Chemical mapping of a 177-nucleotide RNA with DMS and 2A3.
The DMS profile rests on 5,333 reads.
For 2A3 the reverse transcriptase was SuperScript II with manganese.
It was measured as part of the RMDB library OK1LIB.

RNA sequence: GGGAACGACUCGAGUAGAGUCGAAAAAUGAAGGCUGCAGCUCUCUCGGGAGUUAACAACAAGUUGUUUGGACUUGAUGGUAACAUCUCAACCAAUUCCGAAAAUACUGAAAGGCAUACUGCGAGGGCUUCGAUUCUAAGUUCGCUUAGAAUCGAAGAAAAGAAACAACAACAACAAC
Reactivity to DMS in 0.01 (KOAc 150mM, MgCl2 10mM, bicine 150mM(pH8.5), 24C), signal-to-noise 3, nucleotides 027 to 126: a050u030g000a090a120g010g020c030u010g000c050a060g030c050u000c020u010c050u020c060g000g000g020a140g010u000u020a010a020c060a050a070c100a020a060g000u000u010g060u020u030u030g000g000a100c060u000u000g000a070u010g000g000u000a030a020c060a100u000c000u000c030a080a120c120c070a010a160u000u010c030c020g020a070a100a020a090u010a100c050u000g000a080a070a080g020g000c020a040u000a050c060u000g010c120g000a020g000g000g000
Reactivity to 2A3 in 0.01 (KOAc 150mM, MgCl2 10mM, bicine 150mM(pH8.5), 24C), signal-to-noise 2, nucleotides 027 to 126: a010u150g040a060a040g050g010c010u030g010c040a030g010c010u010c000u010c020u040c050g020g000g000a020g030u050u090a020a010c010a000a000c010a010a020g010u020u050g210u140u200u250g190g000a010c000u010u010g010a010u020g050g010u010a000a020c040a300u010c020u010c040a020a030c010c020a020a080u130u020c040c050g090a080a030a040a050u200a040c060u130g060a080a080a030g050g000c030a050u050a140c010u030g050c030g020a040g000g020g000